Description
Structure probing data (DMS and 2A3) for a 177-nucleotide construct.

RNA sequence: GGGAACGACUCGAGUAGAGUCGAAAACCUUUAAAGAGUGCGUAACAGCUCACUCACCGAGGUUAUUUGCCUCCAAGAUGGAAGAGGCUAAAGCCAGUUACCGAUACAUUAGACCACCGAAAGGUGAGAACUCUGAUUGAUUCGUCAAUCAGAGUUCAAAAGAAACAACAACAACAAC
Reactivity to DMS in 0.01 (KOAc 150mM, MgCl2 10mM, bicine 150mM(pH8.5), 24C), signal-to-noise 5, nucleotides 027 to 126: c000c000u000u000u030a060a090a130g010a040g030u010g000c070g000u010a090a160c300a170g000c020u000c020a050c020u000c000a110c220c190g000a040g010g000u000u000a100u020u010u010g010c000c020u000c000c080a150a170g000a070u040g020g020a130a120g010a040g000g000c010u020a060a060a060g000c010c030a090g000u040u000a090c040c060g010a140u010a070c120a060u020u030a070g010a110c170c020a010c000c030g010a090a090a150g010g010u010g000a100
Reactivity to 2A3 in 0.01 (KOAc 150mM, MgCl2 10mM, bicine 150mM(pH8.5), 24C), signal-to-noise 8, nucleotides 027 to 126: c000c000u010u080u080a140a100a010g020a000g000u030g010c030g030u040a230a070c040a090g040c030u020c020a010c010u010c000a040c030c080g050a080g020g020u050u020a150u150u080u060g010c000c000u000c020c020a130a070g060a170u230g080g060a130a050g010a040g010g030c040u060a040a020a000g010c000c000a020g030u070u080a060c030c020g020a030u020a120c020a030u050u110a090g060a110c050c000a000c020c000g060a090a030a000g010g000u010g020a040

The data come from the RNA Mapping Database (RMDB), libraries RFM100 and RFMREP.
The reactions ran in a buffer of 150 mM KOAc, 10 mM MgCl2 and 150 mM bicine (pH 8.5), at 24 C.